Notes:
Chemical mapping of a 177-nucleotide RNA with DMS. The reactions ran in a buffer of 150 mM KOAc, 10 mM MgCl2 and 150 mM bicine (pH 8.5), at 24 C. It was measured as part of the RMDB library OK2TST. For DMS the reverse transcriptase was MarathonRT.

[RMDB]
RNA sequence: GGGAACGACUCGAGUAGAGUCGAAAAUUAUGAAAAAUGAAGAACAACACAAUCCACCAACUCCAAAACAUGGUCGAAUAAUAUUCCCGCUUUACACAAUGGGAAAAGUUUGUGUAGAUAAGAAGCAUAGGCUAUUACCAUUCGUGGUAAUAGCCUAAAAAGAAACAACAACAACAAC
Reactivity to DMS in 0.01 (KOAc 150mM, MgCl2 10mM, bicine 150mM(pH8.5), 24C), signal-to-noise 1, nucleotides 027 to 126: u010u000a080u010g000a110a060a150a160a000u000g000a110a090g000a050a040c120a060a060c040a060c130a060a060u000c040c060a060c100c030a070a100c090u030c010c030a060a060a060a060c160a060u000g020g000u000c060g000a120a040u000a020a010u000a140u000u010c010c000c000g000c210u000u000u000a010c020a020c000a020a020u000g000g000g010a150a020a090a120g000u000u000u000g020u000g020u010a030g000a100u010a070a120g050a130a070g020c160a120